[RMDB]
RNA sequence: GGGAACGACUCGAGUAGAGUCGAAAAGCGGCAGGAUGUGUGUUGUACCGGUACGGGCAAGCCCGCACCAGUCCAACACCGCCCCUUACUCACCUACGGUUCGACGGCAUCCUGCUCUGCGAGGCUAUCCGUGAAAGAAAUUCGUUUCUUUCACGGAAAAAGAAACAACAACAACAAC
Reactivity to 2A3 in 0.01 (KOAc 150mM, MgCl2 10mM, bicine 150mM(pH8.5), 24C), signal-to-noise 8, nucleotides 027 to 126: g020c010g000g000c010a010g010g020a030u020g080u020g010u000g000u030u000g000u000a000c000c010g000g000u010a010c010g000g010g020c140a200a070g150c010c000c000g000c000a000c000c000a000g010u040c030c000a000a010c000a010c010c000g020c000c010c000c000u050u100a080c030u070c100a110c010c050u100a070c060g010g050u040u100c060g050a050c040g090g000c000a010u010c000c000u010g010c010u010c030u050g000c010g030a050g100g000c040u050a050
Reactivity to DMS in 0.01 (KOAc 150mM, MgCl2 10mM, bicine 150mM(pH8.5), 24C), signal-to-noise 7, nucleotides 027 to 126: g020c050g000g010c010a010g000g000a020u000g010u020g010u010g010u010u000g000u000a010c010c030g010g020u010a030c020g000g000g010c100a130a230g030c010c000c000g020c020a000c010c000a020g010u000c010c010a020a020c020a060c010c090g000c120c050c010c060u000u030a050c060u010c120a110c110c090u010a070c130g010g000u000u010c060g000a120c200g010g010c010a060u000c010c000u010g000c010u010c040u020g010c010g010a110g010g000c080u010a100